[RMDB]
Source: RMDB library RNAMAK, as collected in RNAgym. This 207-nucleotide RNA was probed chemically with 2A3 and DMS. Values cover nucleotides 27 to 156. For DMS, 4,880 sequencing reads were counted. For 2A3, 14,187 sequencing reads were counted.
RNA sequence: GGGAACGACUCGAGUAGAGUCGAAAACGCUGGGUCGCGUAACAUCUAUUCCUUUGAUCUUCUGAAGCGCGCACGGAAGGGAGGGUAGUGGCGACCUGUGCUGAAGCGCGCACGGCAACCGAAAGGUGCGAAAGUCGUUCCCUUCGGGGAACGACAAGAUAUAAGAACUGUUCGCAGUUCUUAUAUCAAAAGAAACAACAACAACAAC
Reactivity to 2A3 in 0.01 (KOAc 150mM, MgCl2 10mM, bicine 150mM(pH8.5), 24C), signal-to-noise 8, nucleotides 027 to 156: c020g000c010u030g000g000g010u010c000g010c030g120u140a070a090c060a140u170c060u130a100u250u300c030c000u300u280u070g020a030u010c000u000u000c000u020g050a200a030g010c010g000c000g000c010a010c020g010g010a000a000g020g030g000a010g010g010g010u050a050g010u050g100g000c000g000a000c000c000u010g010u010g000c010u020g020a130a030g000c010g000c000g000c000a000c010g010g000c010a010a020c000c000g040a070a030a020g020g000u020g010c020g070a120a070a030g010u000c000g000u000u000c000c000c000u000u010c130g020g000g010g000a000a000c000g000a000c000a000a010
Reactivity to DMS in 0.01 (KOAc 150mM, MgCl2 10mM, bicine 150mM(pH8.5), 24C), signal-to-noise 2, nucleotides 027 to 156: c070g000c000u010g010g010g020u000c000g040c000g010u000a090a180c120a100u010c030u000a110u000u010c010c000u000u000u000g020a070u000c060u000u000c020u010g010a060a090g040c030g060c020g030c000a300c020g010g000a040a050g000g020g000a040g040g020g000u000a050g030u010g010g020c000g000a050c020c000u000g010u000g030c040u000g020a080a070g020c060g000c020g070c020a300c000g000g000c010a140a080c020c010g000a090a090a120g000g010u010g010c030g000a110a110a190g020u000c000g030u010u010c000c000c010u000u000c190g020g020g010g000a020a020c010g010a010c010a010a060